Chemical mapping of a 207-nucleotide RNA with 2A3 and DMS. As a SHAPE reagent, 2A3 marks flexible, mostly unpaired nucleotides at the ribose 2'-OH. 2A3 adducts were read by reverse transcription with SuperScript II with manganese. Reactivities are given for positions 27 through 156.
[RMDB]
RNA sequence: GGGAACGACUCGAGUAGAGUCGAAAACACUUUACAAAGCCCUUUUACAAGCAUUACUGCAACUGACCUUAACUAGUUAUGAGAAGUGGAACAGACAGUAUCUCUAUAGGGAAGAAGGCGUCAGAGACUGGGUGAGUGACUAGCUUCAGAGGCACCAGCAAAAAUACCAUUUCGAUGGUAUUUUUGCAAAAGAAACAACAACAACAAC
Reactivity to 2A3 in 0.01 (KOAc 150mM, MgCl2 10mM, bicine 150mM(pH8.5), 24C), signal-to-noise 6, nucleotides 027 to 156: c020a020c020u160u230u230a100c100a060a120a080g030c020c020c000u030u080u030u110a080c070a060a020g040c020a050u070u090a060c040u040g040c030a100a070c030u050g070a060c010c010u080u050a070a050c030u030a060g200u280u080a100u210g120a050g030a140a050g030u080g020g030a090a030c010a020g130a010c000a020g060u050a070u030c030u000c010u020a060u140a120g030g000g020a030a020g030a010a010g050g000c020g000u030c030a000g040a010g020a130c040u050g060g000g010u060g010a030g010u040g020a020c020u030a020g050c010u090u080c050a030g010a040g110g010c030a040c030c010a030
Reactivity to DMS in 0.01 (KOAc 150mM, MgCl2 10mM, bicine 150mM(pH8.5), 24C), signal-to-noise 2, nucleotides 027 to 156: c050a060c020u010u000u010a160c060a090a110a190g030c030c030c000u010u010u010u000a060c080a050a140g000c110a070u000u010a070c050u010g000c030a060a110c020u000g000a170c020c020u010u000a050a180c050u020a090g000u000u000a090u020g010a180g010a080a110g030u000g020g020a070a120c040a070g010a060c050a050g010u000a210u000c010u000c030u000a100u000a070g020g010g000a090a050g000a040a090g040g000c030g000u010c030a130g010a070g010a090c040u010g000g020g010u010g020a120g010u010g000a100c000u000a090g000c040u000u000c010a130g010a130g020g010c050a030c030c030a130